[RMDB]
RNA sequence: GGGAACGACUCGAGUAGAGUCGAAAAGAUAUGGAUGCUCCAUAGAGCGAUGAGUCGGAAACGACGAGCUCGUGGGCAUCCUAAGUCAAAAGUAUGUAUUGCGGUCUUCGGACCGCAAUACAUACAACAGAGCAGUUUGGUUCGCCAAACUGCUCUGAAAAGAAACAACAACAACAAC
Reactivity to DMS in 0.01 (KOAc 150mM, MgCl2 10mM, bicine 150mM(pH8.5), 24C), signal-to-noise 1, nucleotides 027 to 126: g000a090u010a300u010g000g000a060u000g030c010u000c020c010a010u010a160g000a010g000c000g040a150u010g010a240g040u030c000g000g000a080a090a170c010g000a000c000g010a170g020c010u010c010g010u010g000g010g000c000a010u000c000c010u000a010a040g000u000c010a100a080a100a120g000u000a000u000g010u000a000u000u000g030c010g000g000u010c000u000u010c220g030g000a000c000c000g000c020a000a000u000a010c000a010u000a000c010a090a170